The record gives the reactivity of an RNA of 177 nucleotides to 2A3 and DMS.
[RMDB]
RNA sequence: GGGAACGACUCGAGUAGAGUCGAAAACAUGAUUGCUCGGCAACUAUAAUGACGGGUAGGUCGGGUACGAACCGUCGUAUGGUUCGUGAGCUGAGACGGCUUUAGGGAUUAAAGCUGGGCGAACUGACUGCUACUGAACUUUCGAGUUCAGUGGCAGAAAAGAAACAACAACAACAAC
Reactivity to 2A3 in 0.01 (KOAc 150mM, MgCl2 10mM, bicine 150mM(pH8.5), 24C), signal-to-noise 9, nucleotides 027 to 126: c040a050u170g020a140u130u190g010c010u000c010g080g000c050a020a010c020u030a010u040a140a210u110g020a010c010g020g030g040u070a050g040g120u070c090g070g040g140u160a050c020g030a110a050c010c000g030u040c020g050u060a040u080g010g000u020u020c040g040u100g060a010g000c000u010g010a030g010a030c000g010g000c000u020u010u020a070g060g110g120a200u100u100a030a000a000g000c000u010g000g060g030c040g020a060a030c040u040g070a020
Reactivity to DMS in 0.01 (KOAc 150mM, MgCl2 10mM, bicine 150mM(pH8.5), 24C), signal-to-noise 8, nucleotides 027 to 126: c060a130u050g000a090u030u010g010c010u000c010g000g010c100a050a060c030u010a050u000a050a060u010g010a010c010g000g000g010u020a110g000g010u010c050g010g010g020u040a050c030g000a070a170c000c000g010u020c120g020u020a050u020g000g010u000u000c060g010u020g000a030g000c010u000g000a120g000a080c010g000g000c000u000u000u000a020g000g050g010a140u030u010a020a030a030g000c000u000g000g010g010c050g010a070a140c070u010g000a300